RNA sequence: GGGAACGACUCGAGUAGAGUCGAAAAGCCAUUAUUUUCCGAUAAUACCAAACAGUGCUCUGCCCCCGCUCAGAGUGAUGUGGGGACAAAAAAAGUAUCCACGAAGAAGGGUCUGAGAAACUCCCACGUAUAUGCUCUUAUUCGUAAGAGCAUAUACAAAAGAAACAACAACAACAAC
Reactivity to 2A3 in 0.01 (KOAc 150mM, MgCl2 10mM, bicine 150mM(pH8.5), 24C), signal-to-noise 6, nucleotides 027 to 126: g040c010c020a030u120u100a080u060u130u060u050c030c010g020a020u060a150a040u050a200c020c030a060a050a070c030a070g060u030g090c020u020c020u080g020c010c000c000c000c020g000c000u010c010a070g060a020g200u070g050a060u120g010u010g010g000g000g010a010c060a000a180a010a040a000a000a020g020u020a030u010c020c010a020c030g020a040a060g050a060a030g090g000g020u020c040u060g060a060g080a100a050a020c030u010c020c000c000a030c030
Reactivity to DMS in 0.01 (KOAc 150mM, MgCl2 10mM, bicine 150mM(pH8.5), 24C), signal-to-noise 6, nucleotides 027 to 126: g020c060c060a070u000u000a090u010u000u000u000c060c060g010a110u000a050a090u010a110c070c060a060a100a080c090a070g020u010g010c020u000c040u000g010c030c010c010c010c050g020c030u000c030a090g000a110g010u010g000a070u010g040u000g020g000g010g010a040c030a000a000a050a070a060a030a060g010u000a050u000c020c020a050c040g020a090a120g010a110a100g010g010g010u000c020u010g000a080g010a080a100a110c160u000c000c010c020a090c230
Notes:
Chemical mapping of a 177-nucleotide RNA with 2A3 and DMS. Conditions: 150 mM KOAc, 10 mM MgCl2 and 150 mM bicine (pH 8.5), 24 C. The 2A3 profile rests on 9,009 reads. The data come from the RNA Mapping Database (RMDB), library OK2TRN.